[RMDB]
RNA sequence: GGGAACGACUCGAGUAGAGUCGAAAAGAGGUCUCAACACACACUUGAGACAGGGAGGACCCGCACCACCUCUCACGUGCCACUAAGAGAGUAAUAUAUAUGUGGCACGACUCUCCAGGUGCGGGUGAGAGGAGUCUCAAGACCUCCUAGAGACCUACUUCACUGCUGAUUUCGAUCAGCAGUGAAGAAAAGAAACAACAACAACAAC
Reactivity to 2A3 in 0.01 (KOAc 150mM, MgCl2 10mM, bicine 150mM(pH8.5), 24C), signal-to-noise 3, nucleotides 027 to 156: g100a010g000g000u000c000u020c040a110a060c110a020c060a010c010a000c140u010u010g000a000g010a010c030a010g050g010g010a050g000g050a010c000c000c020g000c000a010c010c010a120c010c050u100c030u050c060a020c030g010u000g010c000c010a000c010u110a220a030g100a040g040a030g280u300a250a110u070a030u040a010u010a030u230g010u000g000g030c000a000c000g000a010c010u110c010u070c040c040a030g000g000u010g000c020g000g010g000u000g010a050g000a010g090g040a010g030u010c000u000c010a010a090g050a160c030c010u020c010c000u020a040g010a000g000a070c000c000u020a030
An RNA of 207 nucleotides, treated with 2A3 and read out base by base. It was measured as part of the RMDB library OK3TST. The RNA was probed in 150 mM KOAc, 10 mM MgCl2 and 150 mM bicine (pH 8.5) at 24 C.